[RMDB]
Structure probing data (DMS and 2A3) for a 177-nucleotide construct. For 2A3, 2,428 sequencing reads were counted. The reactions ran in a buffer of 150 mM KOAc, 10 mM MgCl2 and 150 mM bicine (pH 8.5), at 24 C. 2A3 is a SHAPE reagent: it acylates the 2'-hydroxyl of flexible nucleotides of all four kinds. For 2A3 the reverse transcriptase was SuperScript II with manganese. The DMS profile rests on 3,450 reads.

RNA sequence: GGGAACGACUCGAGUAGAGUCGAAAAUUAAAGGAGGAGGAGAAAUAUAGCGAGAGAUCGGUCCUCCCACGCGCGUCUCGCGCUGAUAAGAGGAAUAAGAGGAUCAUUAAUAGAUAGCGCGCAAAAAUACUAACUUUGGAUUCGUCCAAAGUUAGUAAAAAGAAACAACAACAACAAC
Reactivity to DMS in 0.01 (KOAc 150mM, MgCl2 10mM, bicine 150mM(pH8.5), 24C), signal-to-noise 4, nucleotides 027 to 126: u000u000a040a090a140g020g010a040g000g020a060g010g010a080g010a060a130a110u010a100u000a040g000c030g010a060g000a090g000a050u000c090g010g010u000c010c030u000c010c070c050a050c140g000c000g030c030g000u000c050u010c050g010c030g010c040u000g000a050u010a090a090g010a070g010g010a060a070u010a080a130g010a070g000g000a040u000c020a050u010u010a050a110u000a120g000a080u000a090g000c020g030c040g020c100a020a050a060a070a090
Reactivity to 2A3 in 0.01 (KOAc 150mM, MgCl2 10mM, bicine 150mM(pH8.5), 24C), signal-to-noise 2, nucleotides 027 to 126: u070u040a060a020a070g040g020a040g010g000a010g010g020a060g080a070a120a010u240a050u090a090g030c030g000a010g000a000g000a040u070c030g000g020u020c000c000u010c010c010c010a030c020g060c000g000c020g090u060c020u100c140g010c010g000c020u050g020a000u040a140a050g040a030g040g080a060a050u110a100a060g030a020g080g000a010u030c000a030u030u260a040a100u040a080g080a030u110a040g040c050g000c000g010c040a010a030a000a080a060